RNA sequence: GGGAACGACUCGAGUAGAGUCGAAAAAGAUAUGGAUAUACGUAAGGCUUGGGCCUUCGAUGAAAUGCAAUCGGAAACGAUUGCAUGGAGAAGGUCCCAUGGUUACCCAUCGUAUAUCCUAAGUCAACCAUCCGGUAGGGUUCGCCCUACCGGAUGGAAAAGAAACAACAACAACAAC
Reactivity to 2A3 in 0.01 (KOAc 150mM, MgCl2 10mM, bicine 150mM(pH8.5), 24C), signal-to-noise 1, nucleotides 027 to 126: a000g030a000u010a000u040g010g000a000u000a010u000a010c010g030u040a300a300g230g200c010u000u010g000g010g030c050c070u040u000c080g300a300u030g000a010a010a000u040g000c000a000a020u000c000g020g040a040a000a020c010g000a000u000u000g000c000a020u000g010g010a000g000a010a000g040g020u260c000c000c060a030u020g000g110u300u300a060c040c000c040a020u060c000g040u000a000u000a020u000c000c010u030a010a000g030u000c000a050a120